[RMDB]
RNA sequence: GGGAACGACUCGAGUAGAGUCGAAAAGGAUGCUGUUUGGCCGGUAUUAGCAUCGUAGUGCGAGUCGUAUGACCGGCCUUUUGCGACGAGUCGAAAGACGAGGCUGCGAAGCAGUCGAGCACUACGAGGGAUUCACGGUGUUCGCAUCGUGGAUCCCAAAAGAAACAACAACAACAAC
Reactivity to 2A3 in 0.01 (KOAc 150mM, MgCl2 10mM, bicine 150mM(pH8.5), 24C), signal-to-noise 9, nucleotides 027 to 126: g120g020a080u150g030c060u060g040u150u170u090g020g000c010c010g010g000u080a120u230u180a140g090c080a090u010c010g000u000a000g000u000g010c010g010a020g010u000c000g000u040a070u130g050a030c010c000g010g000c000c000u050u040u050u020g010c000g000a010c000g010a020g010u000c000g020a090a020a020g000a000c000g000a010g000g000c000u010g010c080g100a120a050g020c000a000g000u010c010g020a010g010c000a000c000u000a000c000g000a030
Reactivity to DMS in 0.01 (KOAc 150mM, MgCl2 10mM, bicine 150mM(pH8.5), 24C), signal-to-noise 6, nucleotides 027 to 126: g000g010a080u010g020c020u000g010u010u000u010g010g010c010c010g000g010u000a080u040u040a060g020c110a150u010c000g010u000a010g010u000g000c010g010a280g000u000c010g020u020a090u030g010a040c010c000g000g020c000c000u000u020u000u020g010c010g000a020c000g010a180g000u000c000g000a110a100a130g020a000c000g000a200g010g000c000u000g000c010g020a110a110g000c000a010g000u010c010g000a170g000c000a010c010u000a000c000g010a050